[RMDB]
RNA sequence: GGGAACGACUCGAGUAGAGUCGAAAAGUAGCAUGACGGAAGCUAUGAAUUAAUCCUGGUGGAGGGGUGUGUUCAGUUUGAGGGAGGAUGAUAAAAUGGAACGGAGAUUGCAAGGAGACGUAGAAAAUCUAUAAGAGCUGUUCGCAGCUCUUAUAGAAAAAGAAACAACAACAACAAC
Reactivity to DMS in 0.01 (KOAc 150mM, MgCl2 10mM, bicine 150mM(pH8.5), 24C), signal-to-noise 2, nucleotides 027 to 126: g000u000a050g030c000a110u020g030a120c170g000g030a180a150g030c040u000a040u020g000a050a100u010u000a150a090u000c030c020u010g000g010u000g020g020a080g020g010g000g030u000g000u000g020u000u000c100a050g000u000u000u020g000a110g030g020g000a080g010g000a040u000g000a040u020a040a000a090a100u010g000g000a040a050c080g020g030a110g000a050u000u010g030c040a050a050g000g000a070g040a090c100g020u000a100g000a110a080a050a110
Chemical mapping of a 177-nucleotide RNA with DMS. It was measured as part of the RMDB library RFMREP.